[RMDB]
RNA sequence: GGGAACGACUCGAGUAGAGUCGAAAAAACGUGAACUCCCAACCAUUUAUGCGUUGGAGAGACCGUUUCUUAUUUUGUGCCGAAGCUCUUUAUAAAGCACAAGCUGAAACAGGUGAAAUCAAAGGGCUGAAUGGAGCAAGUUCGCUUGCUCCAUUCAAAAAGAAACAACAACAACAAC
Reactivity to 2A3 in 0.01 (KOAc 150mM, MgCl2 10mM, bicine 150mM(pH8.5), 24C), signal-to-noise 4, nucleotides 027 to 126: a000a000c120g050u130g020a140a010c000u000c000c020c010a000a000c050c000a060u100u260u250a260u290g070c090g000u000u000g040g000a150g000a000g020a200c030c000g000u000u040u020c030u090u170a300u090u100u020u040g060u030g020c020c020g060a080a040g000c000u000c040u000u100u030a270u150a160a100a000g000c000a000c020a010a010g040c070u110g020a080a130a040c040a060g080g080u070g120a030a090a000u110c030a070a020a000g020g000g000c020
Reactivity to DMS in 0.01 (KOAc 150mM, MgCl2 10mM, bicine 150mM(pH8.5), 24C), signal-to-noise 3, nucleotides 027 to 126: a000a020c050g000u050g010a080a070c000u000c000c000c000a010a000c010c010a140u090u000u060a050u010g010c260g040u010u000g000g000a100g020a020g000a200c000c000g000u000u000u010c020u000u000a110u030u040u010u010g000u000g020c010c130g010a190a170g000c000u010c010u020u010u000a090u020a060a210a100g020c020a000c020a040a090g000c080u020g000a080a100a050c180a120g000g000u020g010a030a020a160u020c130a020a000a000g030g000g050c020